[RMDB]
RNA sequence: GGGAACGACUCGAGUAGAGUCGAAAACAUCUUGUGUGGUCCACGUGUUGGAAUGGGACCACGUGGGCGUACCGUGCAAUGAUACGAGGGUUGAGACGGCUUGAGGGAUAAGUCGCCCGCGAAGUGACUCCUUCAGAUCUUUCGAGAUCUGAGGGAGAAAAGAAACAACAACAACAAC
Reactivity to 2A3 in 0.01 (KOAc 150mM, MgCl2 10mM, bicine 150mM(pH8.5), 24C), signal-to-noise 9, nucleotides 027 to 126: c020a050u050c040u080u100g030u020g010u010g060g010u010c010c000a030c030g060u050g020u030u090g070g100a210a140u110g040g020g040a010c000c000a000c000g000u000g000g000g000c050g030u050a020c010c010g010u020g020c020a060a150u190g030a060u080a120c070g040a080g040g040g010u070u140g070a060g020a070c020g010g010c010u020u010g030a060g010g030g010a020u030a050a000g030u010c010g010c000c000c000g000c030g020a050a030g040u040g060a040
Reactivity to DMS in 0.01 (KOAc 150mM, MgCl2 10mM, bicine 150mM(pH8.5), 24C), signal-to-noise 9, nucleotides 027 to 126: c080a070u030c050u010u010g010u020g020u000g010g000u000c000c000a050c100g020u010g010u010u010g000g020a130a090u020g000g000g010a060c050c000a020c010g010u010g010g000g000c030g050u030a080c030c030g000u000g010c060a040a050u030g000a100u020a070c100g000a120g000g000g010u010u000g010a160g010a070c030g000g000c060u000u000g010a120g010g000g000a120u020a000a090g010u010c030g010c010c000c010g010c070g000a060a060g000u020g000a210